Record summary
The record gives the reactivity of an RNA of 207 nucleotides to 2A3. Values cover nucleotides 27 to 156. Conditions: 150 mM KOAc, 10 mM MgCl2 and 150 mM bicine (pH 8.5), 24 C. 2A3 adducts were read by reverse transcription with SuperScript II with manganese. The 2A3 profile rests on 578 reads. As a SHAPE reagent, 2A3 marks flexible, mostly unpaired nucleotides at the ribose 2'-OH. It was measured as part of the RMDB library M2RFPK.

RNA sequence: GGGAACGACUCGAGUAGAGUCGAAAAGUUCAUCCCCUGAUCAAGGAUGCCCGAAACGGUGAGGCGGAAAGCAAAUUAAAUAACAUCAACCCAUCGGGACGGUUGGCCAGUUAAGAAGUGAGGAUUCAAAAGAUCGAACCGUUCGCGGUUCGAUCAAGGUUAGUGUGCAGUUCGCUGCACACUAACCAAAAGAAACAACAACAACAAC
Reactivity to 2A3 in 0.01 (KOAc 150mM, MgCl2 10mM, bicine 150mM(pH8.5), 24C), signal-to-noise 1, nucleotides 027 to 156: g060u040u040c030a030u080c020c000c000c000u060g020a030u090c000a000a000g040g000a010u030g050c020c070c000g020a020a050a010c140g010g020u040g050a080g000g020c050g010g060a110a000a050g000c180a030a020a070u120u080a020a150a100u170a000a070c010a100u060c030a020a020c000c000c000a050u090c030g000g000g040a030c000g010g000u010u010g070g060c080c040a030g030u070u070a050a000g130a030a000g040u040g100a060g000g110a100u080u070c060a130a070a000a070g000a000u000c000g000a000a000c000c000g010u050u030c240g040c000g110g000u000u020c000g000a000u020c000a000a000